Source: RMDB libraries RFM100 and RFMREP, as collected in RNAgym. The record gives the reactivity of an RNA of 177 nucleotides to 2A3 and DMS. The reactions ran in a buffer of 150 mM KOAc, 10 mM MgCl2 and 150 mM bicine (pH 8.5), at 24 C. For DMS the reverse transcriptase was MarathonRT. Values cover nucleotides 27 to 126. 2A3 adducts were read by reverse transcription with SuperScript II with manganese.
RNA sequence: GGGAACGACUCGAGUAGAGUCGAAAAGGCCGGUAGCGAAAGUAUAAUGAUCUCCCAAGAUGUGGGCAAGCCUAGCUAGGGAGGUAUCGAAAACUGUUUGUUGAAGUGGCGUAAUUCUCCCUAUGUAUCUAGAGGAUAGAUUCGUCUAUCCUCUAGAAAAAGAAACAACAACAACAAC
Reactivity to 2A3 in 0.01 (KOAc 150mM, MgCl2 10mM, bicine 150mM(pH8.5), 24C), signal-to-noise 9, nucleotides 027 to 126: g040g010c020c030g070g290u300a020g010c010g020a050a000a000g030u030a060u050a130a130u180g030a020u010c010u010c010c000c010a010a010g060a060u230g060u110g160g000g030c120a150a020g090c000c000u020a040g010c010u010a010g000g000g010a010g040g020u030a060u060c030g020a060a020a030a050c030u070g180u180u040u030g080u010u080g060a140a080g070u090g100g010c010g010u040a010a050u110u030c040u040c070c000c000u070a080u170g090u010a080
Reactivity to DMS in 0.01 (KOAc 150mM, MgCl2 10mM, bicine 150mM(pH8.5), 24C), signal-to-noise 9, nucleotides 027 to 126: g000g010c010c010g000g010u010a050g010c020g010a060a050a060g000u010a050u020a100a120u040g000a020u010c020u000c010c000c010a100a050g000a050u020g010u010g010g010g020c130a100a130g020c010c010u010a070g010c030u000a080g010g000g010a020g010g010u010a020u010c070g010a090a080a070a040c030u000g010u010u010u010g010u000u000g000a070a110g010u010g000g010c020g020u020a030a060u010u010c130u000c000c010c010u010a120u020g010u010a110